The record gives the reactivity of an RNA of 177 nucleotides to 2A3 and DMS.
RNA sequence: GGGAACGACUCGAGUAGAGUCGAAAAGCCUCUGGACUUGUCUCUUUCCCCGCGCGCGCGGACAGAGCCGGCGUUUAGGCCCGAGCGAGCCCGGGGGCCGCCGGCCGGGAAGACAACGCGGGCACCGCGGUGCCUGUAGAUUCGUCUACAGGCACCGAAAAGAAACAACAACAACAAC
Reactivity to 2A3 in 0.01 (KOAc 150mM, MgCl2 10mM, bicine 150mM(pH8.5), 24C), signal-to-noise 3, nucleotides 027 to 126: g050c010c000u030c030u030g060g050a120c030u020u070g020u050c030u010c020u070u050u050c010c000c000c000g010c000g000c000g000c010g010c010g020g020a040c020a050g050a030g010c000c000g010g000c020g010u050u090u230a140g010g000c010c000c010g020a030g050c030g010a020g000c000c000c000g010g000g010g020g000c000c010g000c000c010g000g000c000c010g010g020g030a020a030g020a030c030a020a010c020g040c010g070g010g010c010a020c020c080g030
Reactivity to DMS in 0.01 (KOAc 150mM, MgCl2 10mM, bicine 150mM(pH8.5), 24C), signal-to-noise 3, nucleotides 027 to 126: g000c030c000u010c050u000g000g000a100c070u010u000g010u010c060u000c110u010u000u000c010c020c010c020g000c050g030c160g040c090g010c070g000g000a130c180a070g000a110g020c010c000g000g000c000g000u030u050u060a150g010g020c010c000c010g020a120g010c020g020a120g030c000c000c010g010g000g020g000g030c020c010g000c000c030g000g020c000c040g020g000g000a050a060g000a080c060a060a050c040g000c020g000g000g000c000a080c080c070g020
The RNA was probed in 150 mM KOAc, 10 mM MgCl2 and 150 mM bicine (pH 8.5) at 24 C.
The 2A3 profile rests on 4,856 reads.
High DMS reactivity at an A or C suggests that its Watson-Crick edge is free.
It was measured as part of the RMDB library RFM100.
For 2A3 the reverse transcriptase was SuperScript II with manganese.